[RMDB]
RNA sequence: GGGAACGACUCGAGUAGAGUCGAAAACGCAUGCGAGAGCAUGCGGCUAAGCUUCGGCUUAGUAAGAGCAACUUCGGAUUUGAGGCUCCCCGGCGUGUCUCGAACCAUGCCGGGCCAAACCCAUAGGGCUGGCGGUCCCUGUGCGGUCAAAAUUCCACACCAUGAUGGAGUUCGCUCCAUCAUGGUGAAAAGAAACAACAACAACAAC
Reactivity to 2A3 in 0.01 (KOAc 150mM, MgCl2 10mM, bicine 150mM(pH8.5), 24C), signal-to-noise 1, nucleotides 027 to 156: c000g040c000a010u010g010c000g020a030g000a000g090c010a000u000g010c000g000g010c010u000a000a000g020c010u030u110c240g090g000c000u000u030a000g000u040a060a010g000a000g030c020a090a150c000u050u050c060g030g000a000u010u010u020g030a020g050g040c000u020c000c000c000c000g000g010c010g000u000g030u060c110u050c260g080a040a030c040c000a020u000g000c000c000g000g000g000c000c020a020a000a000c000c000c010a010u020a010g030g000g020c060u050g150g090c090g040g050u100c000c000c000u000g010u010g020c150g000g000u010c010a000a000a020a030u210u000c000c000a030